[RMDB]
RNA sequence: GGGAACGACUCGAGUAGAGUCGAAAACUGGCCACGAACGAUACAGCACUCAAAAAGGGACAGCCGUACGCAGAAAUCGAGGUGAUGAAGAUGUACAUGCAACUGCCUGUGCAUGAGGGCGGAAUCAUGUGUUACACGGAUUCGUCCGUGUAACACAAAAAGAAACAACAACAACAAC
Reactivity to DMS in 0.01 (KOAc 150mM, MgCl2 10mM, bicine 150mM(pH8.5), 24C), signal-to-noise 2, nucleotides 027 to 126: c080u010g010g000c000c020a110c110g000a060a040c080g010a130u000a050c040a090g020c030a090c040u000c120a030a110a030a120a120g000g000g000a060c070a130g010c090c030g010u010a080c080g010c060a080g000a030a070a060u000c040g000a090g000g030u000g010a080u000g020a070a060g000a040u010g000u000a080c030a060u010g030c070a080a120c150u020g030c010c010u000g020u000g010c060a040u020g000a100g030g020g010c020g000g000a110a050u010c060a040
Reactivity to 2A3 in 0.01 (KOAc 150mM, MgCl2 10mM, bicine 150mM(pH8.5), 24C), signal-to-noise 1, nucleotides 027 to 126: c020u030g000g000c010c030a060c080g050a110a000c020g010a040u080a110c090a020g010c030a010c050u060c050a090a110a080a070a000g030g040g030a030c000a000g030c000c040g020u030a040c040g000c060a030g030a030a130a000u120c070g020a040g070g050u180g000a010u070g030a030a030g070a080u100g000u010a030c010a040u080g040c050a080a080c060u090g020c000c010u030g000u010g060c040a030u050g050a030g020g000g000c030g030g000a020a030u050c040a050

The record gives the reactivity of an RNA of 177 nucleotides to DMS and 2A3. The reactions ran in a buffer of 150 mM KOAc, 10 mM MgCl2 and 150 mM bicine (pH 8.5), at 24 C. For 2A3 the reverse transcriptase was SuperScript II with manganese. High 2A3 reactivity points to a flexible backbone, as in loops and unpaired stretches. For 2A3, 1,409 sequencing reads were counted. DMS adducts were read by reverse transcription with MarathonRT.